[RMDB]
RNA sequence: GGGAACGACUCGAGUAGAGUCGAAAAGAUAUGGACUGUCUAUGGGAGCUUACCUUCGGAAACGAAGGAUAAGCUUUGAUCAUACAUGACAGUCCUAAGUCAAAACCGCUAUCUUCGGAUAGCGGAACUCAUGUGGAGGGUUCGCCCUCCACAUGAGAAAAGAAACAACAACAACAAC
Reactivity to 2A3 in 0.01 (KOAc 150mM, MgCl2 10mM, bicine 150mM(pH8.5), 24C), signal-to-noise 1, nucleotides 027 to 126: g000a020u030a030u120g000g000a020c000u000g010u060c080u210a000u020g050g000g080a190g000c010u000u000a040c020c000u080u000c000g000g010a020a020a010c000g000a010a040g000g010a010u000a000a000g060c030u010u010u010g020a010u020c080a000u020a110c040a110u110g010a000c000a010g060u000c000c000u000a000a000g010u000c010a020a020a140a190c000c010g020c010u000a000u000c020u030u080c300g200g010a010u020a000g000c050g000g000a010a010
Reactivity to DMS in 0.01 (KOAc 150mM, MgCl2 10mM, bicine 150mM(pH8.5), 24C), signal-to-noise 1, nucleotides 027 to 126: g000a030u000a300u040g000g010a000c000u000g000u000c000u000a000u000g050g000g010a060g010c000u000u000a010c000c000u000u000c000g000g010a060a050a110c000g000a040a000g000g010a050u000a000a000g010c000u010u000u000g060a150u000c100a120u000a160c300a080u000g010a000c000a000g040u000c000c000u010a030a030g010u040c010a140a050a130a230c000c000g020c010u000a000u000c000u010u010c230g000g000a000u000a000g000c000g000g000a020a020
Overview
The record gives the reactivity of an RNA of 177 nucleotides to 2A3 and DMS. The RNA was probed in 150 mM KOAc, 10 mM MgCl2 and 150 mM bicine (pH 8.5) at 24 C. For DMS the reverse transcriptase was MarathonRT. The data come from the RNA Mapping Database (RMDB), library TTRDES. DMS (dimethyl sulfate) methylates the pairing face of unpaired adenines and cytosines. For 2A3 the reverse transcriptase was SuperScript II with manganese.